[RMDB]
RNA sequence: GGGAACGACUCGAGUAGAGUCGAAAAGGGCGUCAUUUCGAUGACGCCCAUACGUCUACUCCGAUAGGCGAGGACGACGCCGACGGGCGCGUUUGCCAAUCGCACCGUCCAGAUUCGUCUGGACGAAUGUCCGUUAUCGGUUCGCCGAUAACGGACAAAAAGAAACAACAACAACAAC
Reactivity to DMS in 0.01 (KOAc 150mM, MgCl2 10mM, bicine 150mM(pH8.5), 24C), signal-to-noise 1, nucleotides 027 to 126: g000g000g020c020g000u010c000a010u000u000u000c200g040a010u000g000a020c010g020c000c000c000a010u010a000c210g000u000c000u000a010c010u000c040c060g000a040u000a050g010g000c020g010a160g040g010a030c010g010a170c020g080c010c020g010a130c300g000g010g000c020g000c020g000u000u010u000g000c030c050a080a030u020c040g020c120a170c220c040g020u000c020c020a030g000a070u000u000c090g010u000c000u000g000g000a010c000g010a060a040
Reactivity to 2A3 in 0.01 (KOAc 150mM, MgCl2 10mM, bicine 150mM(pH8.5), 24C), signal-to-noise 1, nucleotides 027 to 126: g010g000g010c010g000u010c010a000u070u070u140c160g080a030u030g010a000c000g000c000c000c000a000u000a000c060g000u050c010u000a010c000u000c020c010g020a070u010a060g010g010c030g030a060g140g020a040c040g030a100c000g020c000c010g170a300c130g040g030g000c030g010c000g000u010u060u060g030c010c000a010a050u020c000g000c020a090c030c040g000u000c000c000a020g000a000u020u030c170g020u000c050u010g020g000a000c000g030a050a020